RNA sequence: GGGAACGACUCGAGUAGAGUCGAAAAGCACAAGACUUCGAACAUUAUAGCAGUUAGUAGUUGCCUAAACCCAUAGCAAUAUAUGGGACAGUAGAGGUCGCAAGCCUAUACUGUGCGGUGAACAUUCAAAAGGGAUGGUACUUCGGUACCAUCCCAAUCUUAGUUCUUCGUUCGCGAAGAACUAAGAAAAAGAAACAACAACAACAAC
Reactivity to DMS in 0.01 (KOAc 150mM, MgCl2 10mM, bicine 150mM(pH8.5), 24C), signal-to-noise 2, nucleotides 027 to 156: g010c040a060c070a050a090g010a120c030u000u000c030g010a130a160c080a070u000u000a090u000a100g000c000a120g010u010u000a160g030u000a090g000u000u010g000c030c020u010a060a060a220c010c000c010a000u000a020g010c010a090a120u010a240u000a000u000g030g010g000a030c000a010g000u000a000g020a020g000g020u010c070g110c300a130a210g010c000c000u000a040u000a020c000u000g000u000g040c080g000g000u030g000a060a070c070a150u000u000c110a020a040a110a140g000g000g070a030u000g010g020u000a010c000u000u010c240g040g050u010a000c020c000a000u000c010c000c000a000a000
Reactivity to 2A3 in 0.01 (KOAc 150mM, MgCl2 10mM, bicine 150mM(pH8.5), 24C), signal-to-noise 1, nucleotides 027 to 156: g040c030a040c030a020a070g060a110c100u130u090c140g120a140a060c060a140u270u230a230u220a080g020c050a040g000u100u170a050g060u090a040g010u060u030g030c030c000u060a010a240a000c060c000c000a000u000a000g000c050a140a080u020a000u000a000u230g010g000g000a000c010a000g030u010a000g000a000g060g000u150c050g080c160a000a000g000c010c000u010a010u000a000c010u000g010u070g080c080g070g000u070g060a030a060c000a140u010u300c120a150a070a070a020g000g000g010a000u000g000g000u000a000c000u030u050c250g000g060u000a000c010c000a000u030c000c030c000a000a000